[RMDB]
RNA sequence: GGGAACGACUCGAGUAGAGUCGAAAAGCAAGAGCGUUCGCGCUCUUGCAAAGAAAAUGCGUCCAAAGGGUGAGGAUGGGAAGCACGCAAAACCCACACCCAAAACACUCUGCUUCGGCAGAGUGAACCAAAUAAUCCUGUUCGCAGGAUUAUUUGGAAAAGAAACAACAACAACAAC
Reactivity to 2A3 in 0.01 (KOAc 150mM, MgCl2 10mM, bicine 150mM(pH8.5), 24C), signal-to-noise 5, nucleotides 027 to 126: g000c000a000a000g000a010g000c010g010u080u110c190g020c020g050c090u000c000u000u000g000c000a010a000a000g020a000a100a010a020u120g030c030g040u000c030c020a080a070a080g010g000g010u020g010a060g120g030a110u070g030g020g000a080a060g060c070a040c150g080c040a010a040a100a140c010c010c000a010c010a000c010c010c000a040a050a010a010c000a000c000u010c000u000g010c000u020u060c210g100g000c010a000g000a000g000u000g000a010a010
Reactivity to DMS in 0.01 (KOAc 150mM, MgCl2 10mM, bicine 150mM(pH8.5), 24C), signal-to-noise 4, nucleotides 027 to 126: g020c000a000a010g010a010g020c000g040u000u010c220g020c010g050c000u010c000u000u000g010c010a010a050a060g000a060a070a060a080u010g010c030g020u000c010c040a070a100a110g010g010g010u000g010a110g020g030a170u000g010g010g010a070a060g020c110a050c140g000c120a040a030a100a120c020c000c000a130c050a040c020c010c020a060a070a070a180c000a010c000u000c000u000g000c000u000u020c190g000g020c000a000g000a000g020u000g000a040a120

An RNA of 177 nucleotides, treated with 2A3 and DMS and read out base by base. Source: RMDB library M2PK50, as collected in RNAgym. The reactions ran in a buffer of 150 mM KOAc, 10 mM MgCl2 and 150 mM bicine (pH 8.5), at 24 C. For DMS the reverse transcriptase was MarathonRT. In probing experiments dimethyl sulfate is read out at A N1 and C N3, which are open when not base-paired.